RNA sequence: GGGAACGACUCGAGUAGAGUCGAAAAUCUGAAGACACUGUUCACUGCCAGUCUGAAGUGGUCUCUGACCCGCUGGAAUACUGUGAAUGCAGGCACCAAGAAGACGAGUAUCCUUUUUGUCAGGGAGUGUCAUACCGUUAUUCGUAACGGUAUGACAAAAAGAAACAACAACAACAAC
Reactivity to DMS in 0.01 (KOAc 150mM, MgCl2 10mM, bicine 150mM(pH8.5), 24C), signal-to-noise 3, nucleotides 027 to 126: u000c020u010g010a150a130g010a110c050a060c090u000g000u000u000c020a040c060u010g000c020c010a030g010u000c130u000g010a080a070g040u020g000g010u000c000u010c200u020g000a030c020c030c040g010c030u000g010g010a080a090u010a090c090u000g000u010g020a070a070u000g000c070a070g000g000c060a210c050c060a050a080g000a090a080g010a070c070g020a090g000u000a100u010c040c010u000u010u000u000u000g010u000c090a060g010g000g010a120g030

Source: RMDB library OK2TST, as collected in RNAgym. The record gives the reactivity of an RNA of 177 nucleotides to DMS. The RNA was probed in 150 mM KOAc, 10 mM MgCl2 and 150 mM bicine (pH 8.5) at 24 C. The DMS profile rests on 2,721 reads.